[RMDB]
RNA sequence: GGGAACGACUCGAGUAGAGUCGAAAACUCACUAUGGCGUGGUGUAUCGCUUCUCUCGGCCCAGCGUACCUCAUCUCCAUGCGUAGGACGGAGAACACCACGGAGCCCUUCGGGUAGUAGUGGCUAAGACUCAAUCUUCGUUCGCGAAGAUUGAGUCAAAAGAAACAACAACAACAAC
Reactivity to DMS in 0.01 (KOAc 150mM, MgCl2 10mM, bicine 150mM(pH8.5), 24C), signal-to-noise 2, nucleotides 027 to 126: c020u000c000a080c050u010a070u000g030g000c010g050u000g030g070u000g000u020a050u000c170g030c160u010u000c050u000c020u000c070g040g000c030c010c010a300g030c000g010u000a060c070c070u000c090a110u000c010u000c060c090a140u000g000c010g000u030a110g040g010a070c020g000g000a030g000a010a070c010a070c000c000a020c000g000g000a090g010c010c000c010u010u000c150g020g020g030u000a160g000u020a030g020u010g000g000c130u010a060a080
Reactivity to 2A3 in 0.01 (KOAc 150mM, MgCl2 10mM, bicine 150mM(pH8.5), 24C), signal-to-noise 1, nucleotides 027 to 126: c000u000c020a000c000u060a040u140g070g070c040g000u010g020g000u040g030u030a110u200c120g000c050u040u060c010u000c030u070c030g060g000c040c000c000a010g000c000g000u030a070c020c040u090c040a170u050c030u040c090c020a030u060g020c040g040u080a090g000g000a010c050g000g010a020g010a010a010c020a000c000c000a010c010g000g040a010g040c000c000c000u080u090c150g060g000g000u030a060g000u000a010g020u050g050g000c040u070a040a030

The record gives the reactivity of an RNA of 177 nucleotides to DMS and 2A3. The reactions ran in a buffer of 150 mM KOAc, 10 mM MgCl2 and 150 mM bicine (pH 8.5), at 24 C. 2A3 adducts were read by reverse transcription with SuperScript II with manganese. In probing experiments dimethyl sulfate is read out at A N1 and C N3, which are open when not base-paired. For DMS, 1,170 sequencing reads were counted. It was measured as part of the RMDB library OK2TRN.